[RMDB]
RNA sequence: GGGAACGACUCGAGUAGAGUCGAAAAAGAUACAGAACAUCUAAGUGCUGAAAUGGUUAGACUGAGAAGCCUUCUUGACGACCAGAAAGUGGAACCAAUUGCACUGAUCUGUGAUCAACUUGAAGGGACACUGACCUAGGUUCGCCUAGGUCAGUGUAAAAGAAACAACAACAACAAC
Reactivity to 2A3 in 0.01 (KOAc 150mM, MgCl2 10mM, bicine 150mM(pH8.5), 24C), signal-to-noise 1, nucleotides 027 to 126: a000g030a020u080a000c080a020g230a170a020c040a040u010c040u180a080a080g080u030g110c030u080g100a020a160a220u070g020g000u050u000a000g030a070c100u070g080a020g030a140a010g030c140c000u050u030c010u040u050g030a080c070g020a020c000c000a050g080a110a110a010g060u030g050g080a020a040c050c030a000a130u120u200g040c030a040c010u000g040a180u000c000u040g150u140g050a260u060c050a000a030c030u000u080g000a000a020g080g010g050
Reactivity to DMS in 0.01 (KOAc 150mM, MgCl2 10mM, bicine 150mM(pH8.5), 24C), signal-to-noise 1, nucleotides 027 to 126: a150g010a070u000a010c050a060g000a060a120c070a090u010c190u000a090a020g000u000g010c010u000g000a110a130a150u030g000g020u000u000a060g000a090c010u000g000a090g000a160a100g000c020c000u000u010c020u000u000g000a060c300g010a040c020c010a000g000a010a190a090g010u000g000g000a000a020c170c120a020a150u040u010g000c000a030c000u000g020a070u000c040u020g000u030g010a090u000c040a010a270c070u000u010g020a140a090g000g000g000
Notes
Structure probing data (2A3 and DMS) for a 177-nucleotide construct. DMS adducts were read by reverse transcription with MarathonRT. Reactivities are rounded to 0.1 and cut off at 0 and 3. Reactivities are given for positions 27 through 126. It was measured as part of the RMDB library OK2TRN. The DMS profile rests on 807 reads.